[RMDB]
RNA sequence: GGGAACGACUCGAGUAGAGUCGAAAAGGUGGUGCCCUUACAAUCAGACUUCAAGUACAUACACUGUGUGGCUAGUAUGUUCGCUCACAAUGGAUAAUGCCAUGUCAAGGUGCAACAAUUGAAUCACAUGUUCCUAUGUGUUCGCACAUAGGAACAUAAAAGAAACAACAACAACAAC
Reactivity to DMS in 0.01 (KOAc 150mM, MgCl2 10mM, bicine 150mM(pH8.5), 24C), signal-to-noise 5, nucleotides 027 to 126: g010g040u000g010g020u000g020c040c020c030u000u000a060c140a090a100u010c090a100g010a100c100u000u000c080a070a090g010u000a050c100a110u000a120c020a070c050u010g020u020g020u010g020g000c030u000a090g020u010a030u000g010u010u000c070g010c050u000c070a050c130a060a060u000g000g000a090u010a060a080u000g010c010c020a030u000g000u000c100a060a070g010g020u000g020c070a030a080c130a070a130u010u010g000a060a100u010c100a110c200
Reactivity to 2A3 in 0.01 (KOAc 150mM, MgCl2 10mM, bicine 150mM(pH8.5), 24C), signal-to-noise 3, nucleotides 027 to 126: g070g020u060g030g020u020g000c000c010c000u030u040a110c060a120a090u120c040a010g080a080c030u040u050c080a070a060g060u040a070c020a060u080a010c060a030c120u040g010u000g010u000g120g000c030u010a030g070u080a090u180g070u030u080c020g000c010u030c000a040c060a030a030u050g010g000a030u080a210a050u140g080c020c020a010u050g080u050c040a010a040g050g000u060g020c010a030a020c010a020a100u100u140g040a050a040u050c050a040c010